Chemical mapping of a 207-nucleotide RNA with 2A3.
RNA sequence: GGGAACGACUCGAGUAGAGUCGAAAACAAGAAACUGGUUAAUCGUUUUCCUUGGUAGUAUAGCGGAAACCAUAAAUAAGAAGAACUCUAAGUGCUUGAGUAGAGUUAAAAUAAUUAGACAGGCAAUUAAGGUACUCCACGUUCGCGUGGAGUACAACGUACUGUCGAACUUCGGUUCGACAGUACGAAAAGAAACAACAACAACAAC
Reactivity to 2A3 in 0.01 (KOAc 150mM, MgCl2 10mM, bicine 150mM(pH8.5), 24C), signal-to-noise 2, nucleotides 027 to 156: c010a090a000g050a120a160a040c130u070g000g040u060u060a080a010u110c020g000u010u030u050u090c000c020u080u090g170g000u070a070g020u030a060u140a150g020c020g070g020a020a090a040c000c010a020u090a200a100a070u180a060a090g100a080a020g030a020a030c000u000c000u040a020a010g030u070g250c010u000u010g000a020g000u000a000g010a000g020u150u140a050a000a000a000u070a010a020u110u000a000g000a040c000a000g000g000c000a010a020u160u210a130a070g040g000u000a010c000u000c000c000a000c010g030u060u100c230g040c000g040u000g000g000a020g000u000a000c000a000a000

Notes
The 2A3 profile rests on 995 reads. Conditions: 150 mM KOAc, 10 mM MgCl2 and 150 mM bicine (pH 8.5), 24 C. The data come from the RNA Mapping Database (RMDB), library M2RFPK.